[RMDB]
The data come from the RNA Mapping Database (RMDB), library OK2TST.
Chemical mapping of a 177-nucleotide RNA with DMS and 2A3.
RNA sequence: GGGAACGACUCGAGUAGAGUCGAAAAUCAUCUGGUAAUGAAAUUUCAACACUCAGGCGAUCUGCAAACCGUGCUUUUUCUAUUUCCAGAUAAGCAUUCACAUGUUCAAUUUCAUCACUCAAUGUGACCAGCUUGUAACAUUCGUGUUACAAGCUGGAAAAGAAACAACAACAACAAC
Reactivity to DMS in 0.01 (KOAc 150mM, MgCl2 10mM, bicine 150mM(pH8.5), 24C), signal-to-noise 1, nucleotides 027 to 126: u000c030a020u000c060u010g020g030u000a030a000u000g000a010a120a060u000u010u040c080a060a080c070a070c090u010c120a040g020g010c050g020a090u000c070u010g000c150a040a020a100c150c160g000u000g010c030u000u000u030u000u010c060u000a090u000u000u000c050c070a060g000a010u000a070a050g010c090a030u000u010c060a070c140a070u020g000u000u020c090a070a070u000u000u010c040a060u000c020a030c020u000c080a070a050u000g010u000g000a170
Reactivity to 2A3 in 0.01 (KOAc 150mM, MgCl2 10mM, bicine 150mM(pH8.5), 24C), signal-to-noise 2, nucleotides 027 to 126: u110c010a010u000c030u030g030g000u060a070a020u030g100a060a080a090u120u180u110c110a080a030c040a060c060u100c030a050g130g000c090g110a220u110c000u110g000c010a070a090a070c090c100g070u050g010c080u000u030u030u020u000c040u040a110u080u120u030c040c000a000g000a010u020a030a010g000c010a030u080u110c060a050c010a120u150g080u110u120c040a040a080u070u050u040c010a060u000c000a040c010u120c110a030a190u160g010u030g040a040